The record gives the reactivity of an RNA of 207 nucleotides to DMS and 2A3.
Conditions: 150 mM KOAc, 10 mM MgCl2 and 150 mM bicine (pH 8.5), 24 C.
For 2A3, 580 sequencing reads were counted.
For 2A3 the reverse transcriptase was SuperScript II with manganese.
DMS adducts were read by reverse transcription with MarathonRT.
RNA sequence: GGGAACGACUCGAGUAGAGUCGAAAAUAAACUUUUGGGGAAAAGUGUGUAUGUCUUCCUAGAAUCAUAACUCAAUUAAUGCUAUUUCUCAAUUGUAGAUAUUUUCAGGUUGCCCGAUGUUAUCGAGAUGAAGGUUCAAGACCAGACAGACAGCCUAUCAUUACGGGUCAUUCGUGACCCGUAAUGAAAAAGAAACAACAACAACAAC
Reactivity to DMS in 0.01 (KOAc 150mM, MgCl2 10mM, bicine 150mM(pH8.5), 24C), signal-to-noise 1, nucleotides 027 to 156: u010a110a170a090c020u000u000u000u000g010g040g010g010a020a010a110a060g020u010g000u010g010u020a020u000g000u020c000u010u000c050c080u000a100g010a120a070u030c070a070u000a090a060c040u010c030a090a180u010u000a150a040u000g010c010u000a150u000u000u010c030u000c000a020a050u000u010g000u000a200g000a190u000a020u000u000u010u000c030a150g020g010u000u000g000c010c000c120g000a090u000g020u000u000a150u000c110g010a200g040a050u000g020a120a150g020g000u040u010c050a040a140g000a080c020c010a130g010a080c100a050g050a020c050a050g060c100c050u000a250
Reactivity to 2A3 in 0.01 (KOAc 150mM, MgCl2 10mM, bicine 150mM(pH8.5), 24C), signal-to-noise 2, nucleotides 027 to 156: u030a000a030a020c000u070u060u050u040g010g010g030g030a030a030a040a110g030u060g010u000g010u080a080u050g030u040c000u080u110c050c020u100a100g090a080a040u080c090a080u050a140a080c030u020c140a020a300u150u210a150a060u160g010c010u010a090u030u100u010c020u000c000a010a060u020u060g030u020a050g010a070u050a070u080u070u040u060c040a030g090g000u050u080g020c000c020c000g010a040u050g050u120u050a050u100c030g030a010g000a120u130g050a130a030g000g040u030u090c030a000a030g040a050c100c030a010g010a030c040a010g050a000c000a010g040c000c000u030a060